Chemical mapping of a 177-nucleotide RNA with DMS and 2A3. In probing experiments dimethyl sulfate is read out at A N1 and C N3, which are open when not base-paired. For DMS the reverse transcriptase was MarathonRT. It was measured as part of the RMDB library OK1LIB. The DMS profile rests on 36,387 reads.

[RMDB]
RNA sequence: GGGAACGACUCGAGUAGAGUCGAAAAGUGAUUUUUCCAAACCUGUUCAUCUCCGCGUUAGUGUAUUCGGCUCGGGUCUAUUUCAAUGGGUCCCAUUGAGAUGGACAGGCUCCACCCGGAGCCGCCAGGAUCAUUAGGUGUUCGCGCCUAGUGGUCCAAAAGAAACAACAACAACAAC
Reactivity to DMS in 0.01 (KOAc 150mM, MgCl2 10mM, bicine 150mM(pH8.5), 24C), signal-to-noise 9, nucleotides 027 to 126: g010u020g010a060u010u020u010u010u000c030c060a070a120a170c060c030u010g010u010u000c020a040u010c010u000c020c170g020c100g010u010u020a070g020u020g010u010a070u010u000c000g020g010c010u010c040g000g000g000u000c030u000a030u000u010u010c060a040a030u000g000g000g010u030c140c020c010a080u010u000g010a020g000a030u000g000g000a020c020a070g000g010c020u000c040c040a110c160c090c220g010g010a040g010c010c000g010c190c080a110
Reactivity to 2A3 in 0.01 (KOAc 150mM, MgCl2 10mM, bicine 150mM(pH8.5), 24C), signal-to-noise 9, nucleotides 027 to 126: g160u140g110a150u070u050u030u080u060c030c010a050a040a050c020c020u020g010u030u020c010a040u010c020u020c030c030g050c040g060u050u080a100g010u060g030u100a140u030u090c030g020g000c010u020c020g060g010g000u000c020u050a090u020u110u050c050a050a040u050g040g060g130u110c050c020c000a010u020u090g010a010g000a010u010g000g000a010c010a020g000g000c000u000c000c010a060c000c030c030g020g010a000g000c000c000g010c030c030a040